[RMDB]
RNA sequence: GGGAACGACUCGAGUAGAGUCGAAAAUGCAUCGACAACGAGGCUUUGUAUGACAUCUGCUAUCAGAGCUUGCGCAUCUGCUCGCCCACCUACCAGGAUCUCAACCACCUGGUGUCAGUCACAAUGAGUGACCAUUACCAUUCGUGGUAAUGGUCACAAAAGAAACAACAACAACAAC
Reactivity to DMS in 0.01 (KOAc 150mM, MgCl2 10mM, bicine 150mM(pH8.5), 24C), signal-to-noise 3, nucleotides 027 to 126: u000g030c190a040u000c030g000a030c090a170a170c050g010a030g000g000c050u010u000u020g000u000a060u020g030a010c050a100u000c140u020g000c020u040a050u010c030a040g000a030g010c030u000u000g020c060g040c160a270u010c040u000g000c010u000c010g000c020c010c020a120c190c120u000a020c020c030a040g000g010a090u040c020u000c300a040a130c240c300a090c040c030u000g010g020u010g000u000c080a040g000u010c040a080c210a120a120u020g000a200
Reactivity to 2A3 in 0.01 (KOAc 150mM, MgCl2 10mM, bicine 150mM(pH8.5), 24C), signal-to-noise 3, nucleotides 027 to 126: u100g040c000a070u010c000g040a030c020a060a040c020g030a000g030g060c000u030u050u040g090u080a130u120g080a060c020a140u170c220u270g030c000u050a060u170c020a000g010a000g010c000u040u160g060c040g020c000a050u020c010u010g010c010u000c010g030c020c000c000a020c020c000u020a020c000c000a000g000g020a140u030c050u030c120a040a060c030c020a030c010c000u020g010g000u010g000u000c030a000g000u000c010a000c030a140a120u220g060a050
The data come from the RNA Mapping Database (RMDB), library OK2TST. Structure probing data (DMS and 2A3) for a 177-nucleotide construct. For 2A3, 2,465 sequencing reads were counted. Values cover nucleotides 27 to 126. 2A3 adducts were read by reverse transcription with SuperScript II with manganese. Conditions: 150 mM KOAc, 10 mM MgCl2 and 150 mM bicine (pH 8.5), 24 C.